[RMDB]
RNA sequence: GGGAACGACUCGAGUAGAGUCGAAAACUUUUAACUAACUUAAAAAAAUGUGUGAAUACAUGCAUGCACACAUGAAAUAAUUCCUUUGCCAUCCAAUCAAAAACAAUUACCGGGUUAGAUGACUGGUCAAAUCUUAACCUCUACAGUCUCAGCAUUAGAUAAAUGCGGAGUUCGCUCCGCAUUUAUCAAAAGAAACAACAACAACAAC
Reactivity to 2A3 in 0.01 (KOAc 150mM, MgCl2 10mM, bicine 150mM(pH8.5), 24C), signal-to-noise 1, nucleotides 027 to 156: c000u080u100u150u080a020a040c030u000a000a030c020u050u200a000a110a130a000a000a000a040u020g000u000g000u030g020a060a050u130a140c040a060u170g050c040a010u170g030c000a030c000a000c010a030u040g060a020a040a030u200a020a060u020u020c000c000u000u040u090g100c010c000a010u000c020c020a130a020u080c010a000a180a200a000a000c030a060a050u190u160a080c060c070g080g000g000u020u000a040g030a030u030g000a030c030u040g030g060u140c000a000a080a070u010c000u030u150a020a050c020c000u000c060u030a050c030a030g120u060c030u040c120a030g100c010a020u130u130a060

The record gives the reactivity of an RNA of 207 nucleotides to 2A3. It was measured as part of the RMDB library OK3TST. For 2A3 the reverse transcriptase was SuperScript II with manganese. High 2A3 reactivity points to a flexible backbone, as in loops and unpaired stretches. The reactions ran in a buffer of 150 mM KOAc, 10 mM MgCl2 and 150 mM bicine (pH 8.5), at 24 C.